An RNA of 207 nucleotides, treated with 2A3 and DMS and read out base by base. The reactions ran in a buffer of 150 mM KOAc, 10 mM MgCl2 and 150 mM bicine (pH 8.5), at 24 C. It was measured as part of the RMDB library OK3TST. For DMS the reverse transcriptase was MarathonRT. Reactivities are given for positions 27 through 156.
RNA sequence: GGGAACGACUCGAGUAGAGUCGAAAAGAAGCAUUCUGGAGCGCAGCAAUGCAGGCUUUAAUCUCAGCGUAUGGGUUAAGCAGAUGACAGAAUGAUCAACUGGCAUAACGAGCACAUCAUGCAAUGGUAUCGUCGCCGCAUUAAGGCAAUCAUUAAAACCAAAGAGGGAGUUCGCUCCCUCUUUGGUAAAAGAAACAACAACAACAAC
Reactivity to 2A3 in 0.01 (KOAc 150mM, MgCl2 10mM, bicine 150mM(pH8.5), 24C), signal-to-noise 2, nucleotides 027 to 156: g080a030a010g010c020a010u010u020c060u050g060g060a090g100c090g010c060a000g020c020a050a050u040g010c030a060g020g100c020u030u090u120a050a060u050c090u000c040a020g020c060g100u160a050u050g020g000g020u020u040a010a000g000c010a010g070a130u030g010a010c020a020g000a060a050u050g010a020u070c000a000a070c020u060g060g000c020a050u010a150a050c020g020a030g000c080a000c000a110u130c050a060u070g030c070a000a090u020g000g030u110a100u110c060g030u030c020g040c010c030g000c040a060u130u060a110a030g030g040c010a000a030u040c010a000u070u140a120a070a000
Reactivity to DMS in 0.01 (KOAc 150mM, MgCl2 10mM, bicine 150mM(pH8.5), 24C), signal-to-noise 1, nucleotides 027 to 156: g010a210a160g010c030a090u000u010c020u010g010g010a080g060c070g030c010a020g040c100a020a150u000g000c040a110g000g000c010u000u020u000a000a050u030c020u010c020a090g010c070g010u000a100u020g020g000g000u030u000a070a140g010c000a150g020a070u010g040a060c040a030g000a070a020u000g010a060u010c020a130a080c060u040g010g010c020a040u010a010a040c040g000a110g020c040a030c050a080u020c030a080u020g000c000a020a100u000g000g000u020a120u010c070g010u000c020g020c010c000g000c080a060u010u010a090a070g000g020c020a060a130u010c070a030u010u000a060a070a110